[RMDB]
RNA sequence: GGGAACGACUCGAGUAGAGUCGAAAAGAUAUGGAUGAGGACAUCUAUGGUCGAGUAGACAUGAUUACGAUUCGGAAACGAAUCUAUAAUCAACAGCUACUGACCAUAGAUGUCCUCAUCCUAAGUCCUUACAACCUAUGUUCGCAUAGGUUGUAAGAAAAGAAACAACAACAACAAC
Reactivity to DMS in 0.01 (KOAc 150mM, MgCl2 10mM, bicine 150mM(pH8.5), 24C), signal-to-noise 7, nucleotides 027 to 126: g010a110u000a270u010g000g000a010u000g020a020g000g000a020c000a010u000c000u000a000u000g010g000u000c000g010a030g010u000a000g010a040c120a300u000g010a000u000u000a070c300g000a030u000u000c010g010g000a110a110a300c000g000a030a000u000c010u000a130u000a020a000u000c000a030a080c190a280g010c000u000a010c000u000g000a010c000c010a000u000a000g010a010u000g000u000c000c010u000c000a000u000c000c000u000a020a080g000u000c060